[RMDB]
RNA sequence: GGGAACGACUCGAGUAGAGUCGAAAAUAGACCAGGUAAGUGCAGCUACUUAUGAUCAUAAGCAAAUUAAAAUAGGAGAAAGUAGAGACUAUCAAGAAAUUGUUGGCCCUCAUUUAAUAGUGAAUGUUACUGGUGUUGAUAAAAACGGAAAUGAUAAGAGUAUAAGUGGAUUCGUCCACUUAUACUCAAAAGAAACAACAACAACAAC
Reactivity to DMS in 0.01 (KOAc 150mM, MgCl2 10mM, bicine 150mM(pH8.5), 24C), signal-to-noise 2, nucleotides 027 to 156: u000a140g020a130c040c040a070g020g040u000a040a100g020u000g010c030a110g010c040u000a070c020u000u000a090u010g020a120u020c050a130u000a040a060g020c020a090a130a110u020u010a030a070a060a120u000a110g020g020a080g000a080a060a090g040u000a100g010a080g000a020c040u000a050u000c050a050a080g010a080a060a060u000u000g020u000u030g010g000c020c030c050u000c030a060u000u000u000a040a080u020a070g030u000g000a080a090u010g010u000u000a060c040u010g020g030u030g010u000u010g020a110u000a020a020a050a030a120c020g000g000a050a060a100u000g010a070u000a090a160
Reactivity to 2A3 in 0.01 (KOAc 150mM, MgCl2 10mM, bicine 150mM(pH8.5), 24C), signal-to-noise 3, nucleotides 027 to 156: u090a010g080a010c020c000a000g030g020u060a030a070g020u040g090c040a040g000c050u080a020c000u160u100a040u200g090a110u120c080a060u080a060a030g060c020a040a070a070u070u110a130a050a070a070u140a060g060g040a130g050a050a110a000g040u080a030g030a000g040a010c030u030a040u180c040a070a010g050a060a130a050u050u040g030u040u030g000g020c010c030c020u020c020a010u040u060u090a110a100u100a030g060u060g100a050a060u050g000u030u010a010c040u010g030g000u000g010u020u030g020a040u050a130a150a010a000a000c070g060g020a150a060a000u160g050a050u230a180a070
This 207-nucleotide RNA was probed chemically with DMS and 2A3. As a SHAPE reagent, 2A3 marks flexible, mostly unpaired nucleotides at the ribose 2'-OH. Conditions: 150 mM KOAc, 10 mM MgCl2 and 150 mM bicine (pH 8.5), 24 C. Values cover nucleotides 27 to 156. DMS adducts were read by reverse transcription with MarathonRT. The DMS profile rests on 4,022 reads.